[RMDB]
RNA sequence: GGGAACGACUCGAGUAGAGUCGAAAACAGGGGAAUUCAACAAAAUUGCCAGCUCUUGUAACAUCCGUCGAUUACGCUCAAUGUCUAACUCCACAGAAUCGGGGGCAAAGAGGACAUCCCCUGCCAAUCCAAUGUCAUCUUUCGAGAUGACAUUGGAAAAAGAAACAACAACAACAAC
Reactivity to DMS in 0.01 (KOAc 150mM, MgCl2 10mM, bicine 150mM(pH8.5), 24C), signal-to-noise 2, nucleotides 027 to 126: c040a030g000g010g010g000a090a060u010u000c080a070a060c160a080a040a100a150u000u020g000c030c010a130g010c000u000c070u050u000g010u030a070a050c120a040u010c020c000g030u030c020g000a030u020u000a070c130g010c060u000c100a110a120u030g010u000c030u010a090a090c110u010c050c040a070c170a090g000a050a110u000c110g000g000g000g000g010c110a010a080a040g010a080g000g010a040c140a090u000c000c000c010c000u000g000c100c060a110a160
Reactivity to 2A3 in 0.01 (KOAc 150mM, MgCl2 10mM, bicine 150mM(pH8.5), 24C), signal-to-noise 1, nucleotides 027 to 126: c030a010g050g030g010g010a040a050u240u060c070a020a010c000a060a270a040a150u080u160g060c010c030a060g050c000u000c010u040u060g040u040a100a040c020a110u040c030c010g130u040c020g020a080u060u070a070c020g020c080u090c070a040a130u060g030u000c010u080a030a090c030u030c040c050a140c000a100g210a080a080u090c060g010g000g050g000g000c020a030a030a030g060a070g000g030a010c000a090u000c010c000c010c000u020g010c000c010a060a040